An RNA of 177 nucleotides, treated with 2A3 and read out base by base.

RNA sequence: GGGAACGACUCGAGUAGAGUCGAAAACAAAAGAAGAUCUAAUCUGGCCACGCCCACGCAUACACCACCACCGAUAGGAGUUGCUGUGCCAUCGUGUGAGAUAUGGCCGAAGAGCUCCUGACUGUUAGCGUGGCAGUAAUUUCGAUUACUGCCACGCAAAAGAAACAACAACAACAAC
Reactivity to 2A3 in 0.01 (KOAc 150mM, MgCl2 10mM, bicine 150mM(pH8.5), 24C), signal-to-noise 1, nucleotides 027 to 126: c070a010a000a010a040g300a030a070g090a120u060c020u180a230a090u000c080u010g000g000c000c000a060c050g000c010c010c020a000c000g080c000a000u030a110c010a000c060c000a000c000c010a020c000c060g030a000u150a110g020g020a000g070u000u050g030c050u040g010u170g000c020c020a000u040c130g000u170g140u100g040a010g020a000u120a000u000g000g020c000c000g070a080a000g040a000g000c000u000c080c030u040g000a010c000u000g070u120u000a060

Record summary
2A3 adducts were read by reverse transcription with SuperScript II with manganese.